An RNA of 177 nucleotides, treated with DMS and 2A3 and read out base by base. The DMS profile rests on 2,963 reads.
RNA sequence: GGGAACGACUCGAGUAGAGUCGAAAACUUGACCAGUCUUCUCGCCUAUUUGCGACGAAUACUGCGUCGUCAGGAUACACUUAUCGGCUAAAUAUGUCAGGAUUUGGACUCCUUGGCGGGUAGCAAACCAUGCUCCAUCAUUCGUGAUGGAGCAUGGAAAAGAAACAACAACAACAAC
Reactivity to DMS in 0.01 (KOAc 150mM, MgCl2 10mM, bicine 150mM(pH8.5), 24C), signal-to-noise 2, nucleotides 027 to 126: c070u000u000g020a110c080c010a050g020u010c020u000u000c000u000c000g030c000c180u010a180u030u030u060g040c010g000a040c100g000a020a120u010a050c060u000g000c090g020u010c010g020u010c130a040g010g010a030u050a110c110a100c030u000u000a100u010c000g000g000c000u000a010a030a030u060a050u000g040u000c000a100g030g000a020u000u000u060g000g000a060c030u000c020c030u000u070g000g010c030g040g000g000u000a020g010c080a080a040a170
Reactivity to 2A3 in 0.01 (KOAc 150mM, MgCl2 10mM, bicine 150mM(pH8.5), 24C), signal-to-noise 3, nucleotides 027 to 126: c020u080u100g060a030c010c000a020g010u000c000u000u000c000u000c010g000c030c040u130a120u140u230u210g010c000g010a000c060g000a020a020u060a090c020u070g080c070g020u020c020g030u050c030a010g020g030a050u070a040c070a030c030u020u050a090u190c040g000g000c010u080a070a150a070u300a200u240g030u040c030a020g090g000a040u000u000u010g050g000a010c040u010c000c000u020u050g010g040c000g010g020g020u010a010g000c010a060a040a000

The reactions ran in a buffer of 150 mM KOAc, 10 mM MgCl2 and 150 mM bicine (pH 8.5), at 24 C.